RNA sequence: GGGAACGACUCGAGUAGAGUCGAAAAGAUAUGGAGAGGUUCAAGACAUGACCCUGCAUUUCGGAAACGAAAUGAAGGUCAACAGCUUGACCUCUCCUAAGUCAAAAGACGGAGUUCGCUCCGUCAAUCAUGUCAGCUAGUUCGCUAGCUGACAUGAAAAAGAAACAACAACAACAAC
Reactivity to DMS in 0.01 (KOAc 150mM, MgCl2 10mM, bicine 150mM(pH8.5), 24C), signal-to-noise 2, nucleotides 027 to 126: g010a050u000a300u030g000g000a000g030a030g000g010u010u000c000a020a010g000a050c100a200u010g000a030c040c000c050u020g020c010a010u000u000u000c010g010g000a100a140a170c010g030a010a010a000u000g000a190a060g000g000u010c010a030a060c190a150g010c000u000u000g000a010c000c000u010c000u000c000c000u000a020a060g000u010c030a160a080a160a130g000a010c030g010g000a030g010u000u020c270g000c020u000c010c000g010u000c000a040a100
Reactivity to 2A3 in 0.01 (KOAc 150mM, MgCl2 10mM, bicine 150mM(pH8.5), 24C), signal-to-noise 2, nucleotides 027 to 126: g010a000u060a040u110g050g000a000g000a010g030g050u270u300c040a000a000g030a020c100a230u190g000a050c000c020c050u130g180c000a000u000u000u000c000g020g050a050a000a030c000g010a040a010a000u060g010a070a010g030g000u010c000a050a030c030a040g030c010u000u000g010a000c000c010u010c000u020c000c000u000a000a000g000u020c000a000a020a010a070g010a010c010g000g020a000g000u130u130c190g090c200u000c000c000g000u030c000a030a010